RNA sequence: GGGAACGACUCGAGUAGAGUCGAAAAACACGAGUCAGCUCAGACUUGUGCGAGUACCGAUUGUGCAAUCGGUGCAGAGUCUAGUCUACGCUGACUGGACUAGUAAGUGAUUGCACAAUCACUUGCAUCAGUAGGGGAGUUUCGACUCCCCUACUGAAAAAGAAACAACAACAACAAC
Reactivity to 2A3 in 0.01 (KOAc 150mM, MgCl2 10mM, bicine 150mM(pH8.5), 24C), signal-to-noise 3, nucleotides 027 to 126: a000c020a000c020g000a010g020u000c010a040g020c150u080c190a030g010a030c000u010u010g000u040g020c000g010a020g010u010a050c030c090g010a000u000u020g040u020g040c060a000a010u010c020g110g040u050g000c020a030g040a000g280u000c010u030a020g000u000c010u060a060c190g030c240u040g000a000c010u000g000g000a000c000u010a030g080u050a070a200g200u020g100a000u010u020g000c040a000c010a020a000u000c000a020c030u010u040g030c030a050
Reactivity to DMS in 0.01 (KOAc 150mM, MgCl2 10mM, bicine 150mM(pH8.5), 24C), signal-to-noise 4, nucleotides 027 to 126: a080c030a070c040g010a010g010u000c000a120g020c180u010c270a120g010a020c010u000u000g030u000g000c020g000a150g000u000a110c080c040g000a010u000u000g020u000g000c050a010a010u000c000g000g010u010g000c030a110g020a190g010u000c010u000a000g000u000c010u000a140c300g000c150u000g010a010c010u000g010g010a040c030u000a030g000u010a070a060g010u000g010a010u000u000g010c070a020c040a010a000u000c000a040c070u000u010g020c090a210
The record gives the reactivity of an RNA of 177 nucleotides to 2A3 and DMS.
For DMS the reverse transcriptase was MarathonRT.
The reactions ran in a buffer of 150 mM KOAc, 10 mM MgCl2 and 150 mM bicine (pH 8.5), at 24 C.
It was measured as part of the RMDB library OK2TRN.
The 2A3 profile rests on 3,798 reads.
The DMS profile rests on 3,894 reads.